[RMDB]
RNA sequence: GGGAACGACUCGAGUAGAGUCGAAAACGCAUGCAGACUCUGGGGAUUCCUUCAGCGCCAAGAGUGGAAGUGGAGGGGAAUCGGCCACCACUGCUCACUGUCCACUACAGAUGCCCGUGGGUCAGGACCGUACGCUGAGGUUCGCCUCAGCGUACGGAAAAGAAACAACAACAACAAC
Reactivity to 2A3 in 0.01 (KOAc 150mM, MgCl2 10mM, bicine 150mM(pH8.5), 24C), signal-to-noise 1, nucleotides 027 to 126: c040g070c070a030u180g050c000a030g040a090c030u000c060u140g050g050g000g000a090u090u160c020c000u020u230c010a040g000c040g030c050c040a140a060g110a030g140u020g020g010a040a010g000u030g030g070a100g050g030g000g040a010a140u050c030g080g060c010c010a050c000c000a100c060u030g050c040u130c010a020c010u170g170u050c030c020a050c010u070a070c040a010g030a060u170g090c060c060c030g050u130g010g050g000u050c030a020g030g010a020